[RMDB]
RNA sequence: GGGAACGACUCGAGUAGAGUCGAAAAUUGACCUGGAACAACAGUUGUGAGAUCAGCCGAGUAGCAGCUGUGUUGCAGCCUUCUAUUCCAAGAGAGUUCAUGAUCUAUGAUGAUGUCUUCAUUGACACUUACGGGAUCGAUUCGUCGAUCCCGUAAGAAAAGAAACAACAACAACAAC
Reactivity to 2A3 in 0.01 (KOAc 150mM, MgCl2 10mM, bicine 150mM(pH8.5), 24C), signal-to-noise 3, nucleotides 027 to 126: u080u080g040a080c000c000u010g060g020a020a020c090a030a000c010a080g010u000u020g000u000g070a240g020a100u140c040a010g160c000c130g050a040g020u020a000g000c020a000g050c010u000g000u010g060u040u030g000c000a000g030c020c020u070u020c040u050a050u000u070c010c010a050a020g140a000g010a040g140u030u080c030a040u130g080a180u060c070u100a070u140g100a080u010g060a040u100g140u070c050u150u040c070a160u150u140g010a030c020a000
Reactivity to DMS in 0.01 (KOAc 150mM, MgCl2 10mM, bicine 150mM(pH8.5), 24C), signal-to-noise 3, nucleotides 027 to 126: u050u040g010a100c290c000u030g000g030a060a040c050a040a030c080a040g010u000u000g000u000g020a070g000a100u010c010a150g000c130c090g000a160g010u020a260g060c260a020g000c040u000g000u010g000u000u010g030c010a020g000c130c010u030u060c120u000a140u000u030c060c000a080a050g010a050g000a130g030u010u000c020a050u030g010a070u000c050u010a110u000g020a120u020g000a150u000g000u010c020u030u000c220a040u040u010g010a050c200a090